[RMDB]
RNA sequence: GGGAACGACUCGAGUAGAGUCGAAAACGUCAAGGAUUCGUCCUUGACGAAAGUCGCGGCUUGAGGGCGUAUACGGCUGCGCACACACAGGACCCUCAAGCCAAACAGGUGGAUUCGUCCACCUGAAGUUUCCAUACGGUUUCGACCGUAUGGAAACAAAAGAAACAACAACAACAAC
Reactivity to 2A3 in 0.01 (KOAc 150mM, MgCl2 10mM, bicine 150mM(pH8.5), 24C), signal-to-noise 3, nucleotides 027 to 126: c010g000u010c000a010a000g010g020a030u030u100c170g090u040c060c000u010u000g000a010c000g000a010a000a000g000u000c010g020c120g180g000c000u000u010g010a000g010g020g000c020g000u030a050u020a060c030g000g000c010u010g030c010g030c010a050c000a000c000a010c010a100g120g060a130c000c000c000u010c000a000a010g010c000c030a010a000a010c010a000g000g010u010g000g010a000u000u090c160g060u010c060c000a000c000c000u010g010a030a020
Reactivity to DMS in 0.01 (KOAc 150mM, MgCl2 10mM, bicine 150mM(pH8.5), 24C), signal-to-noise 2, nucleotides 027 to 126: c010g010u010c000a000a010g010g010a040u000u010c220g020u000c000c000u000u010g000a000c000g000a020a030a070g030u010c040g040c300g000g000c000u010u000g000a020g000g010g010c010g010u020a110u010a090c090g000g000c020u000g000c030g020c080a070c220a100c120a080c080a050g000g010a140c010c000c010u010c000a000a000g020c020c000a030a050a180c020a010g000g010u010g000g030a060u000u010c160g030u000c010c010a010c000c000u000g000a030a100
Structure probing data (2A3 and DMS) for a 177-nucleotide construct. It was measured as part of the RMDB library M2PK50. DMS adducts were read by reverse transcription with MarathonRT. For 2A3 the reverse transcriptase was SuperScript II with manganese.